[RMDB]
RNA sequence: GGGAACGACUCGAGUAGAGUCGAAAAUCUACUGUAGCGCUUUGUUCUGGUCUAUUACUGUUUCGACUCGGAUGGUAGAAUCGGUUGACGCUGACGCAGGCAAUGGACAAGGUAGAUAUCUUAGGCAGCCUGCAUCAUUCCUGGUCGCCACUAGAUAAUAUUCGGGUGCAUUCGUGCACCCGAAUAUAAAAGAAACAACAACAACAAC
Reactivity to 2A3 in 0.01 (KOAc 150mM, MgCl2 10mM, bicine 150mM(pH8.5), 24C), signal-to-noise 1, nucleotides 027 to 156: u010c000u010a010c030u090g120u170a040g030c000g020c030u100u010u080g010u120u160c090u060g010g070u000c020u040a050u090u070a090c090u120g070u090u020u030c030g000a000c050u020c040g000g020a110u040g020g000u030a050g020a060a000u040c030g000g030u030u110g030a050c070g000c070u050g020a010c070g040c030a000g000g000c000a010a050u030g010g020a010c020a030a000g000g030u020a010g050a150u210a050u130c010u020u050a050g040g000c030a060g300c000c000u000g000c000a000u020c010a030u000u060c000c000u000g000g020u020c000g000c010c030a040c020u040a000g110a130u060a130